[RMDB]
RNA sequence: GGGAACGACUCGAGUAGAGUCGAAAAGAGGGUUGCAAGAGCCUCAAGCUGGCAGACAGGGCCACAAUCGCGAACAUGUCUCCCGAGUACGGUGCCACGAUGGGAUUCUUCCCCGUCGACGCGGAGAUAACAUUAUCUUCUUCGGAAGAUAAUGUUAAAAAGAAACAACAACAACAAC
Reactivity to DMS in 0.01 (KOAc 150mM, MgCl2 10mM, bicine 150mM(pH8.5), 24C), signal-to-noise 9, nucleotides 027 to 126: g000a080g000g000g010u000u000g010c140a090a100g000a110g010c030c020u010c060a100a120g010c100u010g010g010c050a070g010a080c100a100g000g000g000c030c050a050c120a070a080u010c080g010c050g000a070a080c100a070u000g000u000c040u000c020c010c020g000a110g010u010a070c080g000g010u010g010c030c060a170c040g010a040u000g000g010g000a130u010u000c150u010u010c090c000c000c010g010u000c020g010a130c090g020c060g000g000a090g010a160
Reactivity to 2A3 in 0.01 (KOAc 150mM, MgCl2 10mM, bicine 150mM(pH8.5), 24C), signal-to-noise 5, nucleotides 027 to 126: g060a040g040g030g030u090u100g050c050a090a050g030a040g140c010c000u030c020a000a030g040c050u060g020g000c010a010g030a150c030a030g070g030g000c010c010a030c040a030a110u130c060g000c020g080a040a020c040a100u100g030u020c020u000c030c010c000g020a020g030u070a050c060g000g030u050g020c020c010a050c030g020a020u040g010g000g020a010u100u070c050u130u120c010c000c000c000g020u010c010g020a050c040g020c050g030g040a040g010a050